[RMDB]
RNA sequence: GGGAACGACUCGAGUAGAGUCGAAAAGAAUUGGUAUGUAAGCUACUGCUUCCGGUAGCUGCGUCACACUUUAAGAGUGUGCAUACUGAGCCGAAGCUCAGCUUCGGUCCCCCAAGGGAAGCGCAAAACGUCGAUUAUACUUCGGUAUAAUCGACGUAAAAGAAACAACAACAACAAC
Reactivity to 2A3 in 0.01 (KOAc 150mM, MgCl2 10mM, bicine 150mM(pH8.5), 24C), signal-to-noise 7, nucleotides 027 to 126: g110a010a120u020u010g000g000u000a000u000g000u000a000a020g010c000u000a000c060u180g020c010u010u000c010c010g010g000u000a000g000c000u000g000c000g000u000c000a010c000a010c020u090u140u300a300a100g240a000g280u000g000u000g000c020a000u010a000c000u000g000a000g000c000c000g010a000a000g000c030u110c300a050g010c000u010u000c000g000g000u010c020c000c000c000c000a030a040g070g000g000a010a000g000c030g020c020a110a140a020
Reactivity to DMS in 0.01 (KOAc 150mM, MgCl2 10mM, bicine 150mM(pH8.5), 24C), signal-to-noise 3, nucleotides 027 to 126: g010a060a070u000u000g020g000u000a000u000g000u000a270a190g010c010u000a000c000u000g000c010u000u000c010c000g030g000u000a010g000c010u020g000c020g000u000c000a000c010a010c000u010u000u020a220a070g000a010g050u010g010u020g000c000a010u010a020c000u000g020a000g020c000c000g020a020a010g000c010u040c220a150g050c000u000u000c000g000g000u000c060c070c010c130c170a050a040g000g000g000a000a020g020c190g020c260a060a040a080